[RMDB]
RNA sequence: GGGAACGACUCGAGUAGAGUCGAAAAGAUAUGGAAAGUAUCUUGAGGUCGACGAUCGAUGGAACUACAGCGUACUCGGAAACGAGUACAGCUGCCAUCGGGAGACCUCAAGAUACUUUCCUAAGUCCAUAACAUUCAAGUUCGCUUGAAUGUUAUGAAAAGAAACAACAACAACAAC
Reactivity to 2A3 in 0.01 (KOAc 150mM, MgCl2 10mM, bicine 150mM(pH8.5), 24C), signal-to-noise 1, nucleotides 027 to 126: g000a000u050a000u050g020g010a000a020a000g000u020a010u020c000u000u060g000a020g000g000u040c030g040a300c040g010a090u060c000g000a000u020g000g050a080a130c190u290a060c300a010g000c010g020u010a010c000u000c000g020g040a070a070a040c020g000a000g000u010a000c010a010g000c010u000g010c000c000a010u010c000g000g020g010a020g000a000c010c010u000c000a000a000g020a020u000a000c030u000u000u000c000c000u000a000a000g000u000c000
Reactivity to DMS in 0.01 (KOAc 150mM, MgCl2 10mM, bicine 150mM(pH8.5), 24C), signal-to-noise 9, nucleotides 027 to 126: g010a090u010a300u010g000g000a010a010a010g010u000a000u000c000u000u000g010a010g010g010u000c010g010a140c300g000a060u010c010g000a020u000g000g010a130a030c110u020a300c020a000g010c010g000u000a010c000u000c000g010g000a080a100a250c000g000a020g010u000a000c000a030g060c000u000g000c010c010a000u000c000g000g000g000a090g010a010c000c000u000c000a000a000g000a000u000a000c000u000u000u000c000c000u000a020a090g010u000c040
Chemical mapping of a 177-nucleotide RNA with 2A3 and DMS. 2A3 adducts were read by reverse transcription with SuperScript II with manganese. Reactivities are given for positions 27 through 126. For DMS the reverse transcriptase was MarathonRT. For DMS, 28,850 sequencing reads were counted. The reactions ran in a buffer of 150 mM KOAc, 10 mM MgCl2 and 150 mM bicine (pH 8.5), at 24 C.